[RMDB]
RNA sequence: GGGAACGACUCGAGUAGAGUCGAAAAUGGAAAAUUCGCUUGCACAAAAUCAACGCCGCGGCUGAUUUAUUAUUAAUGUGCUCAAGCAAAUUCAAAACGUUUUCAUGAUCUUCGGAUCAUGAAAACGGAAUUCGUUACUGUUCGCAGUAACGAAUUCAAAAGAAACAACAACAACAAC
Reactivity to DMS in 0.01 (KOAc 150mM, MgCl2 10mM, bicine 150mM(pH8.5), 24C), signal-to-noise 3, nucleotides 027 to 126: u010g020g020a110a080a090a030u000u000c100g030c010u000u000g000c000a010c000a070a100a020a020u000c000a020a090c140g000c110c230g030c240g020g040c030u010g000a000u000u000u000a060u040u000a090u010u020a080a220u010g010u000g000c090u010c160a010a010g040c010a050a040a050u010u000c080a090a060a080a300c020g010u000u000u010u000c000a000u000g000a000u000c000u000u010c190g020g000a000u000c010a020u000g000a000a000a010a000c000g010
Reactivity to 2A3 in 0.01 (KOAc 150mM, MgCl2 10mM, bicine 150mM(pH8.5), 24C), signal-to-noise 3, nucleotides 027 to 126: u130g040g020a060a100a020a110u050u050c040g000c000u010u020g000c020a020c000a020a090a020a060u060c020a150a120c120g040c100c030g060c180g120g000c040u010g030a040u030u000u110a070u140u060a070u080u140a170a100u050g010u000g000c060u070c100a010a010g000c000a000a030a030u100u060c050a040a030a080a100c020g000u000u000u000u000c000a000u000g010a000u000c010u030u030c190g080g000a000u020c000a000u000g000a000a000a000a000c000g000
Chemical mapping of a 177-nucleotide RNA with DMS and 2A3.
Values cover nucleotides 27 to 126.
The 2A3 profile rests on 3,311 reads.
DMS adducts were read by reverse transcription with MarathonRT.
Conditions: 150 mM KOAc, 10 mM MgCl2 and 150 mM bicine (pH 8.5), 24 C.
It was measured as part of the RMDB library RFMREP.
The DMS profile rests on 1,747 reads.